[RMDB]
RNA sequence: GGGAACGACUCGAGUAGAGUCGAAAAAGGCAGCUUCCCGGCUUUUAAGCUACGGACGAUGCAAACGUAGCAGGCAUGGAAUUUUCGGCCCUUCGAAAAGCUGAGAUGAGCUCAGCAAGGGAAUCAAUACUGUAUCGAGAUUCGUCUCGAUACAGUAAAAAGAAACAACAACAACAAC
Reactivity to DMS in 0.01 (KOAc 150mM, MgCl2 10mM, bicine 150mM(pH8.5), 24C), signal-to-noise 3, nucleotides 027 to 126: a060g020g000c040a030g020c070u000u000c020c000c060g010g010c040u000u010u020u000a060a150g010c000u000a010c000g010g000a090c100g000a070u000g010c130a070a140a140c010g010u000a010g010c010a130g020g000c020a070u000g010g000a090a090u010u000u000u000c030g000g010c020c000c010u000u000c100g000a090a060a070a090g000c000u000g000a010g010a300u020g000a160g000c010u000c010a020g020c010a020a020g000g000g000a060a080u020c180a100a170
Reactivity to 2A3 in 0.01 (KOAc 150mM, MgCl2 10mM, bicine 150mM(pH8.5), 24C), signal-to-noise 1, nucleotides 027 to 126: a010g080g000c010a030g030c010u020u040c000c000c000g000g000c000u150u040u020u140a050a010g010c010u000a010c020g070g000a040c070g150a100u170g110c120a130a020a050c020g000u030a010g000c010a000g040g000c020a030u140g010g110a110a130u160u040u020u030c020g010g020c000c020c000u060u060c020g050a060a030a080a000g000c000u020g020a000g010a070u210g070a050g100c000u000c000a010g000c030a030a020g030g020g040a010a050u080c060a040a070